[RMDB]
RNA sequence: GGGAACGACUCGAGUAGAGUCGAAAAACUUUCGGGGAAACGGGCAUUGAAAUAAGGAAGGAACAGCAUGUCGAAGGUGCUGGUCACCGGAUUCGGACCCUACGGCGUGACGCCGGUAAAUCCGGCAGGCGCUGAAUAAUUUCGAUUAUUCAGCGCCAAAAGAAACAACAACAACAAC
Reactivity to 2A3 in 0.01 (KOAc 150mM, MgCl2 10mM, bicine 150mM(pH8.5), 24C), signal-to-noise 3, nucleotides 027 to 126: a000c070u080u040u060c060g020g000g070g040a010a150a030c040g050g000g000c040a080u080u250g070a050a050a060u260a090a050g040g070a020a100g020g050a000a020c010a010g010c010a010u050g120u230c060g110a110a030g080g000u010g010c010u010g000g120u060c000a000c080c000g010g000a020u080u050c000g000g010a100c000c000c000u060a080c090g030g020c030g030u120g030a040c100g000c000c000g000g000u040a020a030a030u060c020c000g000g000c000a010
Reactivity to DMS in 0.01 (KOAc 150mM, MgCl2 10mM, bicine 150mM(pH8.5), 24C), signal-to-noise 2, nucleotides 027 to 126: a200c100u000u010u040c010g000g020g020g000a030a090a090c140g080g030g000c080a060u030u010g000a060a060a050u000a140a130g030g040a120a110g000g000a040a030c020a030g000c080a070u000g000u000c130g010a070a100g000g000u020g000c000u000g000g000u000c030a070c040c050g000g030a180u000u030c040g010g000a100c000c000c010u020a020c050g020g000c030g000u060g000a150c170g020c060c020g000g000u000a060a140a130u000c030c000g000g000c120a120